An RNA of 177 nucleotides, treated with 2A3 and DMS and read out base by base. The DMS profile rests on 785 reads. For 2A3 the reverse transcriptase was SuperScript II with manganese.
[RMDB]
RNA sequence: GGGAACGACUCGAGUAGAGUCGAAAAGAUAUGGAAGCUCCAGGCAGCGAAGAACAAGCUCGGAAACGAGCUUGGGAGCUGCUGGGCAUGCUUCCUAAGUCAAAACCGCUCCGUUCGCGGAGCGGAACAGGCAGUUAUUGUUCGCAAUAACUGCCUGAAAAGAAACAACAACAACAAC
Reactivity to 2A3 in 0.01 (KOAc 150mM, MgCl2 10mM, bicine 150mM(pH8.5), 24C), signal-to-noise 1, nucleotides 027 to 126: g020a010u130a060u110g000g020a000a030g000c010u040c070c020a110g300g000c000a030g040c000g270a300a030g020a110a020c010a000a000g000c000u010c010g020g000a050a100a050c020g000a000g030c030u000u000g000g000g020a010g000c000u000g020c000u000g000g000g070c090a030u300g000c000u000u000c000c000u020a220a000g070u060c030a000a070a130a200c010c010g000c000u000c000c000g010u040u060c300g000c010g120g000a000g000c020g050g000a000a000
Reactivity to DMS in 0.01 (KOAc 150mM, MgCl2 10mM, bicine 150mM(pH8.5), 24C), signal-to-noise 1, nucleotides 027 to 126: g000a000u000a300u000g010g000a070a000g030c000u000c010c020a120g020g010c030a020g010c020g000a190a160g000a130a150c000a020a000g000c000u020c010g000g000a100a070a090c000g000a080g000c000u000u000g020g030g000a200g010c000u000g000c000u000g010g010g000c300a030u040g020c010u000u000c000c000u000a040a130g020u000c010a120a030a070a130c020c000g000c010u000c000c040g040u000u010c270g020c000g030g000a000g000c010g020g000a010a040